[RMDB]
RNA sequence: GGGAACGACUCGAGUAGAGUCGAAAAGUGGUUACGGGCUCUGAUCUUGUGAUUGAUAUCCACCACACGCUGGGCCUAGAGAUUAUUGUCUCGCGUAUUGAGCGUGAUGGUCAGCAGACUCUCCCUACUGCGUCGUCUCGUAUCCAUAUGGGAGAUAAGUCGUUUUACUGUUCGCAGUAAAACGACUAAAAGAAACAACAACAACAAC
Reactivity to 2A3 in 0.01 (KOAc 150mM, MgCl2 10mM, bicine 150mM(pH8.5), 24C), signal-to-noise 1, nucleotides 027 to 156: g030u000g000g000u000u000a020c030g040g000g000c020u030c060u070g050a050u080c080u260u300g090u210g090a040u060u050g050a000u060a050u300c030c030a020c000c000a000c020a010c000g000c000u120g000g080g010c010c030u140a050g020a010g000a040u140u190a130u300u300g000u000c000u010c000g000c100g010u030a250u090u230g200a030g020c000g000u010g040a240u000g050g000u040c050a000g000c000a000g000a050c030u010c000u000c030c000c010u030a000c000u000g010c040g030u140c010g040u040c040u000c000g000u020a020u000c000c000a020u020a110u080g000g000g010a000g000a020u090a030